The data come from the RNA Mapping Database (RMDB), library OK3TST. Chemical mapping of a 207-nucleotide RNA with DMS and 2A3. For 2A3, 1,859 sequencing reads were counted. For DMS, 3,421 sequencing reads were counted. For 2A3 the reverse transcriptase was SuperScript II with manganese. For DMS the reverse transcriptase was MarathonRT.
[RMDB]
RNA sequence: GGGAACGACUCGAGUAGAGUCGAAAAUAAAUACCGUCACCAUGGCUGGAGUAAAACUAUCAUGGAAGAAUGCAGAAGGCAUUCAGAAUACCUUAUUGAAUGCAGAUUUGAGAAGAUACCUACAAUUAGCUAUCAGCUCCAGUGCACCACCACAUAGAUCUAGUGACUAGUUCGCUAGUCACUAGAUAAAAGAAACAACAACAACAAC
Reactivity to DMS in 0.01 (KOAc 150mM, MgCl2 10mM, bicine 150mM(pH8.5), 24C), signal-to-noise 2, nucleotides 027 to 156: u000a060a070a130u000a100c060c050g010u000c040a120c040c010a080u000g010g030c080u000g000g010a140g040u000a070a140a110a100c000u000a050u000c070a080u000g010g000a120a130g000a080a030u000g040c010a120g010a130a180g020g000c010a020u000u000c020a090g020a100a080u000a030c030c010u000u000a150u000u020g000a040a010u010g020c120a120g000a120u000u000u000g010a300g000a130a160g000a080u000a020c020c010u050a070c050a040a150u000u000a030g030c010u000a070u010c030a160g000c000u000c040c030a040g040u010g000c040a040c010c010a050c020c040a070c070a110u000a120g000
Reactivity to 2A3 in 0.01 (KOAc 150mM, MgCl2 10mM, bicine 150mM(pH8.5), 24C), signal-to-noise 4, nucleotides 027 to 156: u090a000a050a010u090a100c020c000g050u050c050a050c070c020a060u050g020g000c040u030g050g020a020g040u080a020a050a080a070c070u070a060u180c020a060u110g030g050a040a060g040a050a010u080g030c050a040g060a240a060g160g000c000a000u000u020c000a000g050a050a080u150a110c010c030u150u080a110u170u030g030a020a020u040g000c020a010g090a210u090u160u120g040a060g010a070a010g020a030u030a060c000c010u020a040c060a150a140u120u080a060g010c010u040a020u130c020a020g050c000u000c010c000a010g000u010g000c000a040c000c030a040c030c000a030c030a100u140a040g190